[RMDB]
RNA sequence: GGGAACGACUCGAGUAGAGUCGAAAAGGUUCUGCAACGGAGCUGCAGGCGACGUGGCUCUUCCUGGAGUUCAUGUUUGCCCUGGAGCGCCAGGUGCAGGCUGCAUGCGAGGGCAGCUGCGCUCUCCCACAACCCCUCCAUUCGUGGAGGGGUUGUGAAAAGAAACAACAACAACAAC
Reactivity to DMS in 0.01 (KOAc 150mM, MgCl2 10mM, bicine 150mM(pH8.5), 24C), signal-to-noise 2, nucleotides 027 to 126: g020g010u000u010c010u000g010c010a060a090c060g000g010a060g010c000u000g010c020a040g020g010c030g010a010c010g040u000g000g000c000u000c010u000u000c290c230u000g010g000a020g020u000u000c010a020u000g010u010u000u000g020c120c010c020u000g000g000a010g020c020g010c010c020a070g040g010u000g010c020a000g000g000c010u000g010c090a060u010g000c130g010a080g010g000g010c030a130g010c070u000g010c110g010c020u010c030u000c020c060
Reactivity to 2A3 in 0.01 (KOAc 150mM, MgCl2 10mM, bicine 150mM(pH8.5), 24C), signal-to-noise 2, nucleotides 027 to 126: g070g000u230u260c010u020g000c000a010a000c010g030g000a040g030c020u170g090c010a010g000g030c000g030a000c000g030u020g000g000c000u000c000u160u170c090c090u210g010g030a020g000u160u300c010a010u030g150u040u060u300g050c060c000c010u020g050g030a010g030c010g000c000c010a060g060g010u000g000c000a030g030g000c020u060g000c040a090u150g040c060g080a050g040g020g000c000a050g060c100u140g020c060g000c000u000c010u000c020c000
This 177-nucleotide RNA was probed chemically with DMS and 2A3.
The RNA was probed in 150 mM KOAc, 10 mM MgCl2 and 150 mM bicine (pH 8.5) at 24 C.
The DMS profile rests on 2,857 reads.
For 2A3, 2,297 sequencing reads were counted.
2A3 adducts were read by reverse transcription with SuperScript II with manganese.